[RMDB]
The record gives the reactivity of an RNA of 207 nucleotides to 2A3. Reactivities are rounded to 0.1 and cut off at 0 and 3. For 2A3 the reverse transcriptase was SuperScript II with manganese.
RNA sequence: GGGAACGACUCGAGUAGAGUCGAAAAAAGCGGCUAGGGCAUGUCGAGGACCCGUCACCUCGUUAAUCAAUGGGAAAAACGUAACUGCAAACGACGAUACGUUCGCACUGGCAGCCUAACGGCCGCCGUCCUCUGCCUAGUUCACUGACGGGCUAGUCUGUGAGAAUGUGUUCGCACAUUCUCACAGAAAAGAAACAACAACAACAAC
Reactivity to 2A3 in 0.01 (KOAc 150mM, MgCl2 10mM, bicine 150mM(pH8.5), 24C), signal-to-noise 2, nucleotides 027 to 156: a000a020g020c020g020g000c010u070a070g080g020g000c040a210u060g040u070c010g000a000g000g020a040c000c000c000g010u000c010a000c010c000u010c000g040u060u060a070a110u110c120a050a080u080g010g040g010a070a030a010a000a000c060g000u070a090a020c000u080g050c050a170a130a010c130g050a000c020g060a090u040a060c020g020u020u020c050g000c100a020c080u030g020g000c000a000g030c000c010u060a060a040c140g010g000c000c000g000c000c000g020u020c000c020u010c090u080g070c000c010u060a110g000u160u090c160a120c160u020g000a020c000g020g000g040c000u000a000g030u010